Conditions: 150 mM KOAc, 10 mM MgCl2 and 150 mM bicine (pH 8.5), 24 C. This 177-nucleotide RNA was probed chemically with DMS and 2A3. It was measured as part of the RMDB library TTRDES. For DMS, 5,215 sequencing reads were counted. Reactivities are given for positions 27 through 126.

[RMDB]
RNA sequence: GGGAACGACUCGAGUAGAGUCGAAAAAGAUAUGGAGACGAUCUCUAGCGUGACUGAUGACCUGUGUCGAAGUACUCGGAAACGAGUACCGAAGCCACAGCAAGGUUCGGGUCGUCUCCUAAGUCAACAUGAAGAGAAACUUCGGUUUCUCUUCAUGAAAAGAAACAACAACAACAAC
Reactivity to DMS in 0.01 (KOAc 150mM, MgCl2 10mM, bicine 150mM(pH8.5), 24C), signal-to-noise 5, nucleotides 027 to 126: a110g010a080u010a300u010g000g000a030g010a040c000g000a020u010c010u010c160u000a180g050c220g030u010g020a040c010u000g010a110u020g010a070c300c020u000g000u000g020u000c010g010a300a110g000u000a000c010u010c000g000g000a120a100a220c010g020a000g020u000a000c010c030g010a160a300g000c150c000a010c010a020g010c040a070a100g010g000u000u000c050g010g000g000u010c000g010u000c020u010c000c000u000a010a070g030u010c050a130a210
Reactivity to 2A3 in 0.01 (KOAc 150mM, MgCl2 10mM, bicine 150mM(pH8.5), 24C), signal-to-noise 4, nucleotides 027 to 126: a000g080a040u110a050u130g000g000a010g000a000c010g010a010u040c150u120c190u300a120g130c110g300u300g060a030c010u030g100a300u160g030a180c010c010u030g000u000g000u030c010g010a020a000g000u000a000c000u000c000g010g000a050a050a070c020g000a000g000u000a000c000c010g090a080a010g020c010c010a010c020a000g020c020a090a260g000g010u040u060c040g010g000g030u000c000g000u020c010u000c000c000u000a010a010g000u000c010a010a050